[RMDB]
RNA sequence: GGGAACGACUCGAGUAGAGUCGAAAAGCUCGGAGACGAGCAAGGCUGACAAAACGUUGUCCCAACCUCCACGUGGUGUCGGCUGGAUAAUGCUGCAUUAUGUUGCAUUUAUCAACUGGGAACGAAAAGCCUCACUGCGUUUCGACGCAGUGAGGCUAAAAGAAACAACAACAACAAC
Reactivity to 2A3 in 0.01 (KOAc 150mM, MgCl2 10mM, bicine 150mM(pH8.5), 24C), signal-to-noise 1, nucleotides 027 to 126: g000c000u000c040g000g020a090g000a170c040g010a000g050c000a010a110g020g000c000u040g000a010c000a000a000a040a030c000g000u010u020g020u020c020c000c000a010a020c000c010u000c010c000a110c210g090u180g020g000u040g000u000c000g000g020c020u000g000g000a040u080a080a000u010g000c000u020g000c050a210u080u120a180u300g000u000u040g000c000a010u000u000u150a020u030c000a030a030c030u120g000g000g040a000a000c000g070a040a040a010

Chemical mapping of a 177-nucleotide RNA with 2A3. The reactions ran in a buffer of 150 mM KOAc, 10 mM MgCl2 and 150 mM bicine (pH 8.5), at 24 C. Values cover nucleotides 27 to 126.